Source: RMDB library RFM100, as collected in RNAgym. Chemical mapping of a 177-nucleotide RNA with 2A3.
RNA sequence: GGGAACGACUCGAGUAGAGUCGAAAAAACGAUACUUCUGUCAAGUCCUAAGUAUCCUAUGGAUGGCAGCCUGGCAAGAUGAUCAGGAGAAUACACCUUUGCCUGGAAGCCGAUGGCAUGGGUUGAUUCAGUCCUCUGUGUUCGCACAGAGGACUGAAAAAGAAACAACAACAACAAC
Reactivity to 2A3 in 0.01 (KOAc 150mM, MgCl2 10mM, bicine 150mM(pH8.5), 24C), signal-to-noise 2, nucleotides 027 to 126: a000a010c120g000a070u140a060c030u020u040c050u020g040u020c040a250a160g130u030c000c040u040a040a000g010u070a020u160c090c060u050a050u060g080g040a070u060g010g010c000a000g020c000c000u000g000g000c000a000a160g030a280u080g040a030u060c040a000g240g060a050g110a130a140u260a140c010a060c000c030u050u050u040g040c000c000u000g110g030a070a040g160c070c020g080a050u040g030g000c030a000u000g010g000g000u060u090g060a080u000